[RMDB]
RNA sequence: GGGAACGACUCGAGUAGAGUCGAAAAAUUUCGAGCCAGAUUAACAAUAGAUGAGCUUAAGGCUAUUACACCUAUAUCAACAUCCAAUAAUAUUGCCCACAGAUUAAGAGACAAAAGCACACAAAUGAAAUAUUCUGGUAGCUCCUUAAAUAGGGUGUAUCUUACUGGGGUUCGCCCCAGUAAGAUAAAAAGAAACAACAACAACAAC
Reactivity to 2A3 in 0.01 (KOAc 150mM, MgCl2 10mM, bicine 150mM(pH8.5), 24C), signal-to-noise 1, nucleotides 027 to 156: a000u070u070u060c030g040a000g000c010c010a090g040a110u090u120a160a090c090a120a140u100a100g010a090u100g010a000g020c030u140u160a100a000g010g000c000u000a060u090u150a030c030a010c030c010u030a010u030a000u300c010a000a060c040a030u090c130c020a030a030u120a120a000u070a120u180u100g050c000c000c000a040c020a000g030a040u070u070a140a040g030a030g030a040c060a010a050a020a000g010c010a060c000a000c010a070a000a100u090g010a010a090a000u180a000u080u030c010u000g000g010u000a000g000c000u100c010c000u050u080a090a020a000u020a100g000g010g000u070g000
Source: RMDB library OK3TST, as collected in RNAgym.
Structure probing data (2A3) for a 207-nucleotide construct.
For 2A3, 388 sequencing reads were counted.